[RMDB]
RNA sequence: GGGAACGACUCGAGUAGAGUCGAAAAGAUAUGGAAUACAUGACGACUCAGACGUUGAAACUACUUGCUUGUCGGAAACGACAAGCAAGUAGUGGAGUCUGUAGUCGCAAUGUGUAUUCCUAAGUCACCUUAAAGUAGUCUUCGGACUACUUUAAGGAAAAGAAACAACAACAACAAC
Reactivity to DMS in 0.01 (KOAc 150mM, MgCl2 10mM, bicine 150mM(pH8.5), 24C), signal-to-noise 3, nucleotides 027 to 126: g010a070u000a300u010g000g010a030a010u010a010c000a010u010g010a120c000g010a010c000u000c010a000g000a020c000g020u010u010g010a220a150a010c010u000a010c000u000u000g000c000u010u000g000u000c000g010g000a090a100a250c010g020a020c000a020a000g010c000a000a000g000u000a000g010u000g000g000a070g000u010c000u000g000u000a000g010u020c000g020c080a050a030u020g020u000g010u000a000u010u010c000c000u000a020a120g010u000c040a290
Reactivity to 2A3 in 0.01 (KOAc 150mM, MgCl2 10mM, bicine 150mM(pH8.5), 24C), signal-to-noise 2, nucleotides 027 to 126: g030a000u100a050u190g010g000a010a000u010a000c010a010u080g300a150c000g000a000c000u020c010a000g000a020c020g220u300u070g000a060a080a020c010u000a000c000u000u010g020c030u010u000g030u030c010g000g040a050a110a040c000g000a000c000a000a000g000c010a000a000g000u010a000g000u000g010g000a000g000u010c000u000g010u160a020g010u000c000g000c000a020a040u160g000u000g010u000a010u000u020c000c010u000a090a020g030u020c020a040
Overview: The record gives the reactivity of an RNA of 177 nucleotides to DMS and 2A3. The reactions ran in a buffer of 150 mM KOAc, 10 mM MgCl2 and 150 mM bicine (pH 8.5), at 24 C. The 2A3 profile rests on 8,411 reads. For 2A3 the reverse transcriptase was SuperScript II with manganese.